Overview
The record gives the reactivity of an RNA of 207 nucleotides to DMS and 2A3. Reactivities are given for positions 27 through 156. 2A3 is a SHAPE reagent: it acylates the 2'-hydroxyl of flexible nucleotides of all four kinds.
RNA sequence: GGGAACGACUCGAGUAGAGUCGAAAAACAGAAGGGUGAAAGUUCAAGCAAGCUAGCCGGCAAAAAAGCAAACUUGACCUCCAAGGAUAAAAGAGAUCUUAUCCAAGGAUGCAAAAGAUAAUCUCACAAAAGCUUCAUUCGUUCGCGAAUGAAGCAACAAUACACGAUGCUUCGGCAUCGUGUAUUGAAAAGAAACAACAACAACAAC
Reactivity to DMS in 0.01 (KOAc 150mM, MgCl2 10mM, bicine 150mM(pH8.5), 24C), signal-to-noise 2, nucleotides 027 to 156: a130c070a060g050a080a070g000g040g050u010g000a110a020a110g020u000u000c000a070a090g000c020a020a170g000c030u000a230g030c010c010g000g030c030a000a020a020a170a090a030g020c060a070a040a040c030u000u000g000a120c100c000u000c010c020a020a300g000g010a020u000a000a010a040a020g020a230g000a100u000c060u000u000a050u010c010c000a020a300g000g000a050u000g040c020a040a050a080a040g030a140u000a040a050u020c000u000c020a060c100a000a030a080a140g040c010u000u000c000a010u000u000c000g010u020u000c300g030c020g020a030a000u000g010a030a000g010c010a010a010
Reactivity to 2A3 in 0.01 (KOAc 150mM, MgCl2 10mM, bicine 150mM(pH8.5), 24C), signal-to-noise 5, nucleotides 027 to 156: a000c040a020g070a090a050g050g000g020u050g040a160a060a040g030u110u070c050a040a010g010c010a070a010g010c010u040a020g020c020c030g010g000c090a090a090a020a010a010a010g050c050a080a050a020c030u040u050g050a110c000c010u000c000c010a030a020g000g000a010u020a020a030a030a020g140a000g010a020u020c020u040u020a000u010c010c000a010a010g010g010a010u060g010c020a020a080a020a030g000a020u100a110a050u100c040u020c050a050c070a080a140a020a020g000c000u000u000c000a000u000u000c000g020u020u090c210g010c010g100a000a000u010g000a000a000g000c000a000a000